The record gives the reactivity of an RNA of 207 nucleotides to 2A3. Conditions: 150 mM KOAc, 10 mM MgCl2 and 150 mM bicine (pH 8.5), 24 C.

RNA sequence: GGGAACGACUCGAGUAGAGUCGAAAAGUCGGAACAUAACGACCGCGGGCCGGUGGGGAAUCAGGGGGCUACCGUGGGAUAGCGAUGAGACAGCCCCUCCGAUGGCACCAAGCGUCGGAUCGCGGAAAACACUGUAAGCCCUUCGGGGCUUACAGAACGUGCUAAGAUAGUUCGCUAUCUUAGCACGAAAAGAAACAACAACAACAAC
Reactivity to 2A3 in 0.01 (KOAc 150mM, MgCl2 10mM, bicine 150mM(pH8.5), 24C), signal-to-noise 1, nucleotides 027 to 156: g040u000c010g050g030a110a110c050a160u150a090a060c070g080a050c020c030g000c050g010g040g000c030c030g030g000u030g020g020g020g040a030a060u050c010a050g030g000g000g020g000c000u000a020c030c020g040u020g050g170g040a080u130a040g070c010g070a080u090g040a080g020a080c020a030g000c040c020c000c000u020c010c040g010a030u080g040g010c050a020c070c070a020a010g110c030g010u020c000g020g010a010u020c000g010c020g010g000a020a040a010a000c090a030c000u000g000u010a010a000g010c000c000c000u000u050c120g000g000g010g000c000u000u000a000c000a020g000a000a010

The data come from the RNA Mapping Database (RMDB), library M2RFPK.